[RMDB]
RNA sequence: GGGAACGACUCGAGUAGAGUCGAAAAGAUAUGGAGCUGAAAGGAGGUGGGACCACUUCGGAAACGAAUGUCCCACUACCCACCCUUACAGCUCCUAAGUCAAAAGUUGAGCGUUCGCGCUCAACAACAAAUGAAACGAGUUCGCUCGUUUCAUUUGAAAAGAAACAACAACAACAAC
Reactivity to DMS in 0.01 (KOAc 150mM, MgCl2 10mM, bicine 150mM(pH8.5), 24C), signal-to-noise 6, nucleotides 027 to 126: g010a040u000a300u000g000g010a010g020c000u000g000a120a030a020g000g000a100g030g010u010g000g000g010a020c030c220a050c140u000u000c010g010g000a090a080a140c000g010a090a030u010g010u000c000c000c000a010c000u010a020c070c080c140a300c060c000c000u000u000a140c000a010g000c010u000c000c000u000a000a040g000u010c030a120a080a110a070g010u000u000g000a020g010c000g040u000u020c210g020c000g000c000u000c010a000a000c010a080a150
Reactivity to 2A3 in 0.01 (KOAc 150mM, MgCl2 10mM, bicine 150mM(pH8.5), 24C), signal-to-noise 3, nucleotides 027 to 126: g050a000u030a040u140g000g000a000g010c000u010g030a070a000a010g030g000a050g040g000u000g000g000g010a010c010c030a160c110u090u030c020g020g020a060a040a020c020g010a040a040u300g000u000c000c000c010a000c000u000a000c010c010c010a060c010c000c010u010u010a040c000a000g010c010u000c000c000u010a070a010g040u000c030a040a040a080a170g000u000u000g000a010g000c020g020u070u130c300g030c000g010c110u010c000a000a000c000a000a010